[RMDB]
RNA sequence: GGGAACGACUCGAGUAGAGUCGAAAAAAGUCGUGCACUAGUGUGUAACGAGAGGAGGGAAAUCUUAAACGGAGGUUAACGGGGCCUUUUGGCCAGGCAAUGGGUUGACGGUGCACAAGUAAAGUCGCUAUGGCUACGGCUUCGGCCGUAGCCAUAGAAAAGAAACAACAACAACAAC
Reactivity to 2A3 in 0.01 (KOAc 150mM, MgCl2 10mM, bicine 150mM(pH8.5), 24C), signal-to-noise 1, nucleotides 027 to 126: a000a000g160u160c060g000u000g020c000a000c000u120a060g000u000g000u000g140u300a200a000c000g120a060g120a270g140g000a160g000g000g180a160a260a030u040c080u000u180a300a300a210c140g000g000a100g120g000u000u040a160a300c000g030g000g000g110c000c000u000u000u200u300g000g000c040c000a000g100g000c000a000a220u240g000g000g070u100u160g000a000c000g000g000u000g000c040a000c000a120a000g080u080a010a010a010g000u000c000g000

The record gives the reactivity of an RNA of 177 nucleotides to 2A3. The RNA was probed in 150 mM KOAc, 10 mM MgCl2 and 150 mM bicine (pH 8.5) at 24 C. The data come from the RNA Mapping Database (RMDB), library OK1LIB. 2A3 adducts were read by reverse transcription with SuperScript II with manganese.